An RNA of 207 nucleotides, treated with 2A3 and read out base by base. The RNA was probed in 150 mM KOAc, 10 mM MgCl2 and 150 mM bicine (pH 8.5) at 24 C.
RNA sequence: GGGAACGACUCGAGUAGAGUCGAAAAACGGUCAUAUACGUAUGACCGAAUGAGCAUAACAGGGCCACCCCAAAGCGUUCACAUUGUGGCCCCUGUCAGAUUCUGGUAAAUCUGCGAGAUCUGCUAAAUUAGGUAACUCUCUUCGGAGAGUUACCAAGCAAUAACACCUGUUCGCAGGUGUUAUUGCAAAAGAAACAACAACAACAAC
Reactivity to 2A3 in 0.01 (KOAc 150mM, MgCl2 10mM, bicine 150mM(pH8.5), 24C), signal-to-noise 2, nucleotides 027 to 156: a030c010g000g000u020c000a000u000a000u020a040c170g090u020a010u010g000a000c000c000g010a010a100u080g020a000g040c040a080u050a140a070c020a040g000g040g020c010c020a020c000c000c000c020a000a110a060g050c080g070u180u120c080a090c060a290u060u160g000u020g000g010c030c020c010c000u000g030u050c010a000g010a050u180u090c020u190g020g000u030a000a000a110u040c050u070g080c070g050a090g010a030u070c010u070g000c080u080a000a220a170u210u140a130g010g000u000a000a020c000u010c010u000c000u000u060c180g010g000a000g000a010g010u000u000a000c000c000a000a000